[RMDB]
The record gives the reactivity of an RNA of 177 nucleotides to 2A3 and DMS.
Reactivities are given for positions 27 through 126.
RNA sequence: GGGAACGACUCGAGUAGAGUCGAAAAUCUGUUGACAAGUAAUCGUAUAGUCGAAGUCGGACUACGGUUGCCGCAACAGAAGUCAGAUUGCGUCAAGUCCGACUUGGACUAUUGUAAGAUCUGAUCACUUCACCUUAGUAUUCGUACUGAGGUGAAGAAAAGAAACAACAACAACAAC
Reactivity to 2A3 in 0.01 (KOAc 150mM, MgCl2 10mM, bicine 150mM(pH8.5), 24C), signal-to-noise 6, nucleotides 027 to 126: u020c010u020g050u060u070g040a030c040a100a000g030u040a060a040u030c030g020u080a000u000a000g000u000c070g100a020a000g010u010c000g000g010a000c020u080a100c160g160g020u070u030g000c010c000g000c000a010a020c010a040g140a130a010g080u020c050a020g070a300u000u020g010c010g010u020c020a030a000g000u000c000c000g000a010c000u000u010g020g000a000c000u000a000u000u020g030u030a090a030g000a030u000c010u030g030a080u060c020a010
Reactivity to DMS in 0.01 (KOAc 150mM, MgCl2 10mM, bicine 150mM(pH8.5), 24C), signal-to-noise 9, nucleotides 027 to 126: u000c030u000g020u010u010g000a070c110a090a080g010u000a080a060u000c020g010u000a040u000a010g010u000c000g000a030a030g010u000c040g010g000a020c010u010a140c250g030g020u010u000g010c090c040g000c000a010a010c050a110g010a100a090g010u010c210a090g000a180u000u000g000c030g000u000c030a070a050g000u000c000c000g000a030c050u000u000g000g000a010c000u000a000u000u000g000u010a090a130g000a050u000c030u000g000a110u000c110a150
Description
For 2A3, 18,249 sequencing reads were counted. The data come from the RNA Mapping Database (RMDB), library OK2TRN.